[RMDB]
RNA sequence: GGGAACGACUCGAGUAGAGUCGAAAAGAGGAGGAAAGUAAAGAAAGCAACGGGGCUAGCCGUCAGGUGUUCCUCCCCCCGAGAGGGGAAGAGUGAGGCUUAUCCCGGGGAACUCGGCGAAUCGUCCGGUAAACUUUUAGUUCGCUAAAAGUUUACCAAAAGAAACAACAACAACAAC
Reactivity to DMS in 0.01 (KOAc 150mM, MgCl2 10mM, bicine 150mM(pH8.5), 24C), signal-to-noise 2, nucleotides 027 to 126: g000a110g050g010a060g030g000a070a020a130g010u000a040a080a110g010a060a080a100g010c130a050a080c110g010g010g000g000c110u000a060g010c010c000g000u000c100a040g010g020u010g040u000u000c010c030u010c000c000c000c000c010c020g000a090g010a120g010g000g000g020a040a040g010a110g020u010g000a160g000g000c100u000u000a110u000c030c010c000g000g000g000g000a090a070c040u010c040g000g000c030g010a060a100u010c020g020u000c080c060
Structure probing data (DMS) for a 177-nucleotide construct. Source: RMDB library 15KREP, as collected in RNAgym. Reactivities are rounded to 0.1 and cut off at 0 and 3. Reactivities are given for positions 27 through 126. Conditions: 150 mM KOAc, 10 mM MgCl2 and 150 mM bicine (pH 8.5), 24 C.